Chemical mapping of a 207-nucleotide RNA with 2A3.

[RMDB]
RNA sequence: GGGAACGACUCGAGUAGAGUCGAAAAAGUCACCUAUUACGAUAGGUGACAUUUGAACCAGCGAACAAUUCAGUUGCGAGAUUCGAGGUUUCAGUCUGAAUCAUAGUAGCCAUUACGAUGGCUACAACUCACUCCCGACUGUUCGCAGUCGGGAGAACUGUACGGUCUUCUUCGGAAGACCGUACAGAAAAGAAACAACAACAACAAC
Reactivity to 2A3 in 0.01 (KOAc 150mM, MgCl2 10mM, bicine 150mM(pH8.5), 24C), signal-to-noise 2, nucleotides 027 to 156: a000g000u010c000a000c010c000u000a000u040u040a080c250g060a030u000a000g030g010u000g030a000c000a000u040u040u080g030a010a010c000c000a010g170c010g000a010a000c050a060a080u010u000c000a000g000u000u000g000c010g000a000g000a000u000u000c000g010a010g000g050u080u260u300c020a000g070u120c010u000g100a000a000u060c010a030u070a120g000u000a000g010c010c010a000u020u020a070c210g160a030u010g010g000c000u000a000c000a000a000c020u080c030a110c030u030c020c010c010g030a000c000u030g050u050u100c300g040c100a000g020u010c000g000g000g000a000g000a000a000
2A3 adducts were read by reverse transcription with SuperScript II with manganese.